Structure probing data (2A3) for a 207-nucleotide construct.
For 2A3, 516 sequencing reads were counted.
Source: RMDB library OK3TST, as collected in RNAgym.
For 2A3 the reverse transcriptase was SuperScript II with manganese.
RNA sequence: GGGAACGACUCGAGUAGAGUCGAAAACCCACACCCGCUCAAUACCCAAUCAGACUAUGCGGCAUUUGUAGUCAUCCCUCCUGUCGGUGCGGAACAAACCGCAGAGGUCGAACGUCGACAAGCAUUUAUCACUUCAGCCGAAAAAGCCUUCGGUACACUAUAAUGACGCGUUCGCGCGUCAUUAUAGAAAAGAAACAACAACAACAAC
Reactivity to 2A3 in 0.01 (KOAc 150mM, MgCl2 10mM, bicine 150mM(pH8.5), 24C), signal-to-noise 1, nucleotides 027 to 156: c000c040c000a010c000a010c000c050c000g000c010u030c020a090a050u120a150c000c000c070a000a060u120c110a040g010a060c020u040a020u040g010c010g090g000c020a170u000u000u120g080u070a030g070u020c060a060u030c000c000c030u060c010c000u050g070u130c080g000g000u030g060c080g020g000a030a030c010a050a070a000c000c000g080c010a020g040a070g080g000u040c010g050a120a000c030g130u100c010g030a030c030a080a030g050c010a020u080u250u150a080u120c010a010c140u090u000c110a010g030c000c010g060a000a010a010a010a010g040c030c000u030u000c020g040g000u010a040c040a030